[RMDB]
RNA sequence: GGGAACGACUCGAGUAGAGUCGAAAAAUGCACUGGUUCGCCAGUGCAUGAUUACCGAGAAAGUACCUCGGUAUAAAAGUGCAACGCUUGGAAACAAGGGAAUUCCGAACCGAUUCGUCGGUUCGAAGCUAUUGAUCAGUUUCGACUGAUCAAUAGCAAAAGAAACAACAACAACAAC
Reactivity to DMS in 0.01 (KOAc 150mM, MgCl2 10mM, bicine 150mM(pH8.5), 24C), signal-to-noise 5, nucleotides 027 to 126: a020u000g000c010a020c000u000g000g010u000u000c240g010c000c000a000g020u000g000c000a000u000g000a120u000u000a030c000c000g000a020g000a120a140a160g000u020a130c120c000u000c010g000g010u000a010u010a040a090a110a060g000u000g010c120a070a110c120g010c020u000u000g000g010a160a100a140c030a040a020g000g010g010a100a120u000u000c080c030g000a000a010c000c000g010a030u000u010c190g010u000c000g010g000u000u000c000g000a030a070
Reactivity to 2A3 in 0.01 (KOAc 150mM, MgCl2 10mM, bicine 150mM(pH8.5), 24C), signal-to-noise 4, nucleotides 027 to 126: a000u010g000c000a000c010u000g000g070u030u040c120g070c050c000a010g000u000g000c000a000u000g000a010u000u020a000c000c010g010a000g010a020a250a000g110u100a070c010c000u000c010g000g040u010a000u020a010a040a010a000g080u100g080c060a160a050c070g030c160u010u020g010g020a050a050a030c010a020a010g060g010g050a050a130u160u020c070c010g000a000a000c010c000g020a030u030u050c190g030u000c000g060g000u000u010c000g000a010a010
This 177-nucleotide RNA was probed chemically with DMS and 2A3. For 2A3 the reverse transcriptase was SuperScript II with manganese. The reactions ran in a buffer of 150 mM KOAc, 10 mM MgCl2 and 150 mM bicine (pH 8.5), at 24 C. For DMS, 5,287 sequencing reads were counted.